Source: RMDB library OK2TST, as collected in RNAgym.
The record gives the reactivity of an RNA of 177 nucleotides to DMS and 2A3.
For DMS, 2,012 sequencing reads were counted.
Values are in units of 0.01, from 0 to 300, in steps of 10.
Conditions: 150 mM KOAc, 10 mM MgCl2 and 150 mM bicine (pH 8.5), 24 C.
RNA sequence: GGGAACGACUCGAGUAGAGUCGAAAAGAAACGAGUGUAGAGCGUCACUCACAGUGUCUGCGGCGUAGUAGGUGCACCGUCAAGCAUAGCACUCAUUAGUUUUUCUCUGUCAGGGUCUAAGGCAACCGGAUACGCUAGGAUUCGUCCUAGCGUAUCCAAAAGAAACAACAACAACAAC
Reactivity to DMS in 0.01 (KOAc 150mM, MgCl2 10mM, bicine 150mM(pH8.5), 24C), signal-to-noise 3, nucleotides 027 to 126: g000a040a110a130c120g010a050g020u000g030u000a090g010a120g010c070g040u020c050a090c020u000c070a090c130a120g000u000g000u010c030u010g000c080g010g020c060g000u000a050g010u000a020g020g040u000g010c010a050c060c060g000u000c090a060a080g020c050a080u000a090g000c030a050c040u010c040a080u020u000a080g020u000u000u010u000u010c030u000c020u000g010u010c030a080g010g000g000u020c050u010a090a030g010g030c060a050a120c170c090
Reactivity to 2A3 in 0.01 (KOAc 150mM, MgCl2 10mM, bicine 150mM(pH8.5), 24C), signal-to-noise 2, nucleotides 027 to 126: g120a000a090a020c070g000a030g040u040g020u080a050g020a020g120c050g100u070c020a020c010u050c010a060c040a040g060u060g020u020c010u040g030c020g040g000c010g010u030a010g020u030a030g090g140u070g020c020a030c040c000g070u080c070a090a010g000c030a040u080a050g030c020a010c030u030c030a060u050u070a040g040u000u030u040u080u020c030u000c010u010g050u040c030a030g060g000g000u000c020u000a020a000g030g000c010a020a030c010c040